[RMDB]
RNA sequence: GGGAACGACUCGAGUAGAGUCGAAAAGUUCAGCCUGUACGAUGCCCCGUUACAGUCUGUGGUGAUAUACACGGCCAAUUCCACGAUCUCUCAGAACUGUUUAGGAUCGGAGGUAACGCACCAGACAGCAUAUCGGUGGGUUCGCCCACCGAUAUGCAAAAGAAACAACAACAACAAC
Reactivity to 2A3 in 0.01 (KOAc 150mM, MgCl2 10mM, bicine 150mM(pH8.5), 24C), signal-to-noise 1, nucleotides 027 to 126: g050u090u060c100a040g020c000c000u020g050u030a030c040g050a080u190g090c000c010c030c010g020u050u050a040c080a030g000u000c000u040g100u110g000g040u070g080a030u050a000u020a240c120a020c120g040g000c000c020a050a020u010u000c030c010a070c020g000a010u000c080u000c010u060c110a110g050a290a060c130u060g130u110u040u060a040g030g020a090u000c000g000g020a090g100g000u010a030a000c020g070c000a020c010c000a000g000a090c040a030
Reactivity to DMS in 0.01 (KOAc 150mM, MgCl2 10mM, bicine 150mM(pH8.5), 24C), signal-to-noise 1, nucleotides 027 to 126: g010u020u010c040a080g000c050c000u000g010u000a060c030g000a090u000g010c070c040c060c060g040u000u000a060c060a040g000u000c000u000g010u010g020g020u000g040a040u010a090u000a140c100a130c060g010g000c050c030a060a180u000u000c020c040a090c090g030a010u000c060u000c060u010c080a060g000a030a070c140u000g000u030u040u030a060g050g010a050u000c000g000g020a070g020g000u030a070a030c070g040c100a130c030c010a050g000a080c120a100